Structure probing data (2A3 and DMS) for a 170-nucleotide construct. The RNA was probed in 150 mM KOAc, 10 mM MgCl2 and 150 mM bicine (pH 8.5) at 24 C. The DMS profile rests on 7,792 reads. Source: RMDB library 15KLIB, as collected in RNAgym. DMS adducts were read by reverse transcription with MarathonRT.
RNA sequence: GGGAACGACUCGAGUAGAGUCGAAAAUUCCACUCACCCACUUCUCGAGAAUAUCUUCUCUUCCAUCGCGCUUCUUCUUCGAUUCGGAUCGGCUCAUCUCGACAAGAGGCGGCGGUCCUCAGUGCUCACCCGGCCUGGUUCGCCAGGCCGAAAAGAAACAACAACAACAAC
Reactivity to 2A3 in 0.01 (KOAc 150mM, MgCl2 10mM, bicine 150mM(pH8.5), 24C), signal-to-noise 3, nucleotides 027 to 129: u040u010c000c000a010c040u040c010a050c000c000c010a020c030u080u010c030u030c020g020a040g080a140a110u110a010u100c020u040u010c010u000c020u040u000c040c000a040u050c020g060c040g000c070u000u000c000u050u000c000u040u040c050g090a070u000u080c000g050g030a040u000c000g010g000c000u050c010a090u040c030u010c020g050a040c040a060a090g030a000g050g010c020g010g030c040g020g010u010c000c000u010c040a040g040u020g010c010u010c040a140c020c000
Reactivity to DMS in 0.01 (KOAc 150mM, MgCl2 10mM, bicine 150mM(pH8.5), 24C), signal-to-noise 5, nucleotides 027 to 129: u000u000c010c000a150c130u030c070a130c000c040c030a160c020u020u010c030u030c050g030a300g030a100a190u020a090u020c130u000u020c030u000c070u030u000c050c020a060u000c120g040c050g030c030u040u010c020u000u050c060u020u010c070g010a230u000u000c030g060g020a120u020c070g030g020c030u040c020a030u010c020u010c030g030a090c300a100a090g010a130g030g000c140g060g050c080g000g030u000c030c030u020c050a080g020u040g000c000u030c060a100c140c090